[RMDB]
RNA sequence: GGGAACGACUCGAGUAGAGUCGAAAACACUUUGAAUUCUGAAACCGCCGGUGCAGCAGCAAACUCCUGGGGGUCAGUGCUGAACAGCACCACCAGACAUUCCUUGCUGGAAUCGAAGUUGGGCAGGGAAACACACAGUGUUCGCACUGUGUGUUUCAAAAGAAACAACAACAACAAC
Reactivity to DMS in 0.01 (KOAc 150mM, MgCl2 10mM, bicine 150mM(pH8.5), 24C), signal-to-noise 2, nucleotides 027 to 126: c050a080c110u000u000u010g010a080a110u000u000c020u000g000a100a140a150c030c050g010c080c090g030g010u010g020c040a090g010c110a030g020c080a050a060a190c090u000c060c030u010g010g010g000g020g060u000c140a080g030u000g020c000u000g000a100a120c110a110g000c040a030c010c030a080c070c020a020g000a140c210a070u000u000c030c020u000u000g030c110u010g000g040a080a060u010c030g000a120a080g000u020u000g010g030g040c030a080g030g010
Reactivity to 2A3 in 0.01 (KOAc 150mM, MgCl2 10mM, bicine 150mM(pH8.5), 24C), signal-to-noise 1, nucleotides 027 to 126: c050a000c010u010u070u170g070a120a060u150u040c010u030g070a190a070a040c000c050g050c030c020g030g020u020g030c030a080g020c000a000g010c000a000a000a070c020u060c070c020u160g070g000g020g000g070u100c060a050g030u000g010c020u060g050a200a030c060a050g000c020a000c000c000a000c020c000a010g030a040c020a020u000u000c020c020u020u120g020c010u060g010g110a040a070u070c040g070a100a030g070u130u160g090g020g000c030a000g140g000